Structure probing data (2A3) for a 177-nucleotide construct. It was measured as part of the RMDB library RFM100. For 2A3 the reverse transcriptase was SuperScript II with manganese. The reactions ran in a buffer of 150 mM KOAc, 10 mM MgCl2 and 150 mM bicine (pH 8.5), at 24 C.
RNA sequence: GGGAACGACUCGAGUAGAGUCGAAAAUUGCGAGCUUAUUUUUGGGUUUAGGUGUUCUGCUUUGAGGGGCUUGCUCCGUUCUGCUUUACAAUUAACAACUAAUUUAGAACUGUGACGAUCACGGGGACUGAAGUCACGACUUCGGUCGUGACUUCAGAAAAGAAACAACAACAACAAC
Reactivity to 2A3 in 0.01 (KOAc 150mM, MgCl2 10mM, bicine 150mM(pH8.5), 24C), signal-to-noise 1, nucleotides 027 to 126: u080u000g000c000g130a030g000c060u150u120a070u130u140u070u000u000g030g000g000u160u000u030a000g020g000u000g010u050u070c040u030g020c000u190u000u100g050a070g000g000g160g000c080u000u090g000c000u000c050c000g000u000u000c000u110g010c000u020u180u110a000c010a060a040u240u110a080a000c010a110a000c030u200a100a170u060u000u140a110g040a010a000c000u000g020u030g130a080c110g000a050u080c080a000c010g000g000g000g050a000